An RNA of 177 nucleotides, treated with 2A3 and read out base by base. 2A3 adducts were read by reverse transcription with SuperScript II with manganese. The data come from the RNA Mapping Database (RMDB), library RFM100.
[RMDB]
RNA sequence: GGGAACGACUCGAGUAGAGUCGAAAACAUAAAGAGUUUCAUUCUUAUUAAGUAUUAUGUUGUGUUUGCAUAUUGUUCGGGAAACCGAACGCAAGUAACUUAGUUACUUAUUUAACUUCCUGUAUAUCUUCUCUAUGGCUUUCGAGCCAUAGAGAAGAAAAGAAACAACAACAACAAC
Reactivity to 2A3 in 0.01 (KOAc 150mM, MgCl2 10mM, bicine 150mM(pH8.5), 24C), signal-to-noise 3, nucleotides 027 to 126: c060a060u190a040a220a010g120a070g000u050u140u180c060a100u110u100c060u050u160a080u110u050a060a000g020u030a040u090u000a020u080g030u040u050g060u050g040u050u040u040g000c050a010u050a080u190u300g020u000u010c000g000g000g020a020a070a070c010c010g000a010a010c020g000c000a000a000g000u010a010a020c030u100u060a000g070u020u030a010c010u000u050a010u040u130u090a060a090c050u030u000c020c000u000g080u020a130u030a030u140
About this RNA
Conditions: 150 mM KOAc, 10 mM MgCl2 and 150 mM bicine (pH 8.5), 24 C.